Source: RMDB library M2PK50, as collected in RNAgym. This 177-nucleotide RNA was probed chemically with 2A3 and DMS. The reactions ran in a buffer of 150 mM KOAc, 10 mM MgCl2 and 150 mM bicine (pH 8.5), at 24 C. 2A3 adducts were read by reverse transcription with SuperScript II with manganese. For 2A3, 4,025 sequencing reads were counted.
[RMDB]
RNA sequence: GGGAACGACUCGAGUAGAGUCGAAAAGUACAAUGUUUCGACAUUGUACGAUGGAGCCAAAGCCGAAAGGCUUUUUAAUCCUUGGCUGGCGAAAGCCUAAAAGAAGAAUCCAUUUCGAUGGAUUCAAAACGUGCUAAAUAUUCGUAUUUAGCACGUUAAAAGAAACAACAACAACAAC
Reactivity to 2A3 in 0.01 (KOAc 150mM, MgCl2 10mM, bicine 150mM(pH8.5), 24C), signal-to-noise 2, nucleotides 027 to 126: g000u000a000c000a000a010u000g010u000u080u090c090g010a010c010a010u000u010g010u010a000c000g000a020u070g070g060a020g000c030c000a010a020a000g020c010c010g090a070a020a010g000g020c000u020u010u000u000u010a010a010u000c000c000u020u040g040g000c050u030g010g000c050g060a120a050a010g000c020c040u100a090a070a020a030g130a090a010g000a000a010u000c010c000a010u000u030u100c110g050a010u000g000g000a000u000u010c000a000a000
Reactivity to DMS in 0.01 (KOAc 150mM, MgCl2 10mM, bicine 150mM(pH8.5), 24C), signal-to-noise 7, nucleotides 027 to 126: g010u000a000c000a010a000u000g000u010u000u010c150g020a040c000a000u000u000g000u000a000c000g010a110u000g010g010a090g020c060c080a030a040a020g010c000c000g000a090a070a170g010g010c010u000u000u010u010u010a080a190u000c010c010u000u000g010g010c030u010g010g020c040g010a100a090a130g010c000c010u000a040a030a060a100g020a110a120g000a010a000u000c000c000a010u000u000u010c170g000a020u000g010g000a010u000u000c000a040a040